This 207-nucleotide RNA was probed chemically with DMS and 2A3. The reactions ran in a buffer of 150 mM KOAc, 10 mM MgCl2 and 150 mM bicine (pH 8.5), at 24 C.
RNA sequence: GGGAACGACUCGAGUAGAGUCGAAAAUUCCAUUUGAGUAUCCUGAAAACGGGCUUUUCAGCAUGGAACGUACAUAUUAAAUAGUAGGAGUGCAUAGUGGCCCGUAUGGCAGGCAUUAACAUUCCUGAAAACGUGAAAAGGUUCGCCUUUUCACGAACUAAGGAGAGUGGUUCGCCACUCUCCUUAGAAAAGAAACAACAACAACAAC
Reactivity to DMS in 0.01 (KOAc 150mM, MgCl2 10mM, bicine 150mM(pH8.5), 24C), signal-to-noise 1, nucleotides 027 to 156: u000u010c010c000a120u020u000u030g010a120g050u000a070u000c050c010u030g000a050a030a150a090c020g010g070g030c070u000u000u030u000c010a270g000c080a050u000g000g030a100a120c030g010u000a230c030a180u000a090u000u020a080a050a150u000a180g030u000a050g030g010a190g010u000g000c020a120u000a090g030u000g040g000c020c010c000g020u000a040u000g030g020c050a030g050g040c070a040u020u000a110a130c070a190u010u000c000c000u010g010a060a060a130a160c010g010u000g000a000a040a070a000g000g000u010u020c300g010c000c000u020u020u000u000c000a000c000g010a030a100
Reactivity to 2A3 in 0.01 (KOAc 150mM, MgCl2 10mM, bicine 150mM(pH8.5), 24C), signal-to-noise 2, nucleotides 027 to 156: u030u010c020c000a010u180u080u010g070a110g050u090a110u140c000c020u020g020a010a060a050a020c020g000g000g000c010u120u030u120u180c090a010g010c020a030u040g020g060a160a030c030g090u080a010c050a010u150a060u170u300a120a170a080u140a030g040u020a010g010g100a030g010u000g000c010a080u150a180g070u040g040g000c020c000c000g020u010a010u000g000g020c010a000g000g000c000a000u040u020a030a030c000a020u050u070c000c000u010g020a100a070a000a000c000g000u000g010a000a000a020a000g010g040u070u100c220g120c010c000u000u000u000u010c000a000c010g000a010a000
Values cover nucleotides 27 to 156.